Source: RMDB libraries RFM100 and RFMREP, as collected in RNAgym. The record gives the reactivity of an RNA of 177 nucleotides to 2A3 and DMS. DMS adducts were read by reverse transcription with MarathonRT. Reactivities are given for positions 27 through 126. Conditions: 150 mM KOAc, 10 mM MgCl2 and 150 mM bicine (pH 8.5), 24 C. For 2A3 the reverse transcriptase was SuperScript II with manganese.
RNA sequence: GGGAACGACUCGAGUAGAGUCGAAAAGACACGCCUGAAUGGCAGCAGCAGGCCUUAGCGGCAAUGGACAGCAGGCACAGGACCAGCUUUGCCUCGAGCCGCAACGCUGAUGCCAGAAAAGGACAACACAUCCGUACGUGUUCGCACGUACGGAUGUAAAAGAAACAACAACAACAAC
Reactivity to 2A3 in 0.01 (KOAc 150mM, MgCl2 10mM, bicine 150mM(pH8.5), 24C), signal-to-noise 4, nucleotides 027 to 126: g010a020c020a010c120g080c000c000u020g030a080a060u010g000g010c010a000g000c000a000g000c000a040g050g060c060c100u110u160a020g000c000g010g000c000a000a110u210g040g060a030c030a050g070c030a030g010g010c020a020c060a140g030g110a110c030c010a020g070c000u080u070u150g020c010c000u020c050g040a060g000c000c000g000c030a020a010c010g000c010u000g000a020u000g000c000c010a000g040a010a090a020a000g020g030a060c050a060a040c040
Reactivity to DMS in 0.01 (KOAc 150mM, MgCl2 10mM, bicine 150mM(pH8.5), 24C), signal-to-noise 2, nucleotides 027 to 126: g000a190c120a110c280g020c040c000u000g030a130a120u000g000g070c010a000g000c000a020g030c020a170g000g020c080c070u010u030a130g000c070g010g040c000a030a060u090g020g000a140c040a070g000c100a050g000g000c000a210c110a080g000g000a090c010c130a030g060c000u000u000u000g000c000c050u000c170g000a300g050c000c000g060c040a130a180c120g000c000u030g000a000u000g020c010c000a060g000a070a030a210a000g000g000a100c050a100a090c120